[RMDB]
RNA sequence: GGGAACGACUCGAGUAGAGUCGAAAAUCCGAAUCAUACUUGGCGAGUCUAACUACGCCAUGGCUGCUUUAUUUAGCGUAACGCUAGAUUAGCCUCGUCCCGAUAAGAUCGGGAGAGCCAUCGUCGCUCAGUUGCUCUGAUCUGCCGGCCGCUGGUCCUUAUAUCUAACCUUCGGGUUAGAUAUAAGAAAAGAAACAACAACAACAAC
Reactivity to DMS in 0.01 (KOAc 150mM, MgCl2 10mM, bicine 150mM(pH8.5), 24C), signal-to-noise 1, nucleotides 027 to 156: u000c010c020g000a140a070u010c050a110u020a070c040u010u010g030g010c000g010a150g040u000c060u000a060a120c010u000a060c020g000c010c060a030u000g010g000c010u010g000c020u000u000u000a090u000u010u000a050g040c000g020u000a100a130c090g000c040u000a040g030a070u000u000a080g020c000c000u000c140g010u000c020c010c030g050a120u000a100a100g010a300u000c000g120g010g000a030g010a000g010c010c000a080u000c070g030u010c030g000c020u000c020a070g000u000u000g000c020u000c040u000g010a040u000c010u010g000c000c000g000g000c030c040g010c010u000g000g000u000c020
Reactivity to 2A3 in 0.01 (KOAc 150mM, MgCl2 10mM, bicine 150mM(pH8.5), 24C), signal-to-noise 3, nucleotides 027 to 156: u000c000c010g020a030a070u110c100a110u110a270c060u090u080g070g000c000g010a030g010u040c080u150a070a090c020u150a150c070g000c000c020a000u000g000g000c020u030g000c010u070u170u070a050u060u080u050a070g010c010g100u120a110a080c110g000c020u010a000g010a040u030u070a010g000c000c020u070c040g110u000c000c000c000g040a040u060a140a150g070a130u010c000g000g000g000a030g010a010g000c040c020a070u090c070g110u040c040g030c030u060c020a040g030u070u050g020c020u010c030u070g120a120u040c010u060g030c040c010g020g000c030c010g060c110u050g020g040u000c010

The record gives the reactivity of an RNA of 207 nucleotides to DMS and 2A3. The 2A3 profile rests on 1,551 reads. It was measured as part of the RMDB library RSTRND. Conditions: 150 mM KOAc, 10 mM MgCl2 and 150 mM bicine (pH 8.5), 24 C. 2A3 adducts were read by reverse transcription with SuperScript II with manganese.